[RMDB]
Structure probing data (2A3 and DMS) for a 177-nucleotide construct.
In probing experiments dimethyl sulfate is read out at A N1 and C N3, which are open when not base-paired.
It was measured as part of the RMDB library 15KREP.
DMS adducts were read by reverse transcription with MarathonRT.

RNA sequence: GGGAACGACUCGAGUAGAGUCGAAAAUUUGAGGACAUCAUGUUUUAGUGUCGCUGCACUUACAACUGGUUUGACUUUUCAAACUGUGCGGCCUGGCAAUUUUAACCAAGACUUCUAUGAUUUCGUGCUCUAAAUAACUGUUCGCAGUUAUUUAGAGAAAAGAAACAACAACAACAAC
Reactivity to 2A3 in 0.01 (KOAc 150mM, MgCl2 10mM, bicine 150mM(pH8.5), 24C), signal-to-noise 6, nucleotides 027 to 126: u070u040u080g040a020g030g040a020c010a070u040c010a030u080g050u010u040u030u070a040g000u010g000u020c010g000c030u020g020c010a010c020u130u210a100c070a170a070c110u070g020g020u010u000u020g030a050c050u130u190u110u090c010a000a020a000c010u040g000u000g000c000g000g020c010c030u050g000g000c010a010a020u040u060u070u090a040a010c010c000a050a040g050a060c030u090u020c030u150a130u100g060a190u050u060u050c040g030u090g050
Reactivity to DMS in 0.01 (KOAc 150mM, MgCl2 10mM, bicine 150mM(pH8.5), 24C), signal-to-noise 5, nucleotides 027 to 126: u000u010u010g010a090g010g020a060c110a060u010c040a040u000g010u010u000u000u000a070g010u000g020u000c040g020c030u000g020c000a010c010u000u010a120c220a120a130c300u010g000g010u000u000u010g010a080c300u010u000u020u000c010a010a020a030c030u000g010u000g010c010g000g000c050c090u000g020g000c000a030a030u010u000u010u000a050a080c050c080a090a100g000a050c140u010u000c040u010a060u010g010a110u000u000u000c030g000u000g000